[RMDB]
RNA sequence: GGGAACGACUCGAGUAGAGUCGAAAAGAUGACGAGUCGGUCGGCUCCGCGCUAGGUUUGGUCGCCUAGGGGAUGGAGAUAUGGAAAGGGUCUCGUGUGCUGUCAGUCGGUCGAAAGACGCGCUUGCCUAUAGUUCUAAGUUCGCUUAGAACUAUAGAAAAGAAACAACAACAACAAC
Reactivity to DMS in 0.01 (KOAc 150mM, MgCl2 10mM, bicine 150mM(pH8.5), 24C), signal-to-noise 8, nucleotides 027 to 126: g010a080u000g000a110c040g000a070g020u000c030g010g010u000c040g010g010c020u000c020c040g010c040g010c020u000a020g010g010u000u010u000g020g010u010c210g000c010c000u000a030g000g000g030g030a080u000g010g010a040g000a080u010a080u010g010g010a060a090a110g000g010g000u000c030u000c050g010u000g010u000g020c040u000g010u000c080a050g010u000c040g010g010u000c030g000a080a080a120g000a050c030g010c090g010c040u000u000g010c240
Reactivity to 2A3 in 0.01 (KOAc 150mM, MgCl2 10mM, bicine 150mM(pH8.5), 24C), signal-to-noise 7, nucleotides 027 to 126: g080a040u110g040a020c020g000a010g020u030c010g020g040u030c020g040g000c010u000c010c010g030c000g010c030u020a020g030g020u030u050u130g070g000u070c030g000c010c000u010a020g020g000g060g020a050u100g060g010a030g010a030u110a080u140g100g050a080a070a070g070g010g030u010c010u000c040g050u070g030u040g030c020u030g040u060c010a020g030u050c030g030g000u010c010g040a090a050a020g030a010c030g010c010g000c090u030u060g010c000

Notes: Chemical mapping of a 177-nucleotide RNA with DMS and 2A3. Reactivities are given for positions 27 through 126. DMS adducts were read by reverse transcription with MarathonRT. The data come from the RNA Mapping Database (RMDB), library RFMREP. The reactions ran in a buffer of 150 mM KOAc, 10 mM MgCl2 and 150 mM bicine (pH 8.5), at 24 C.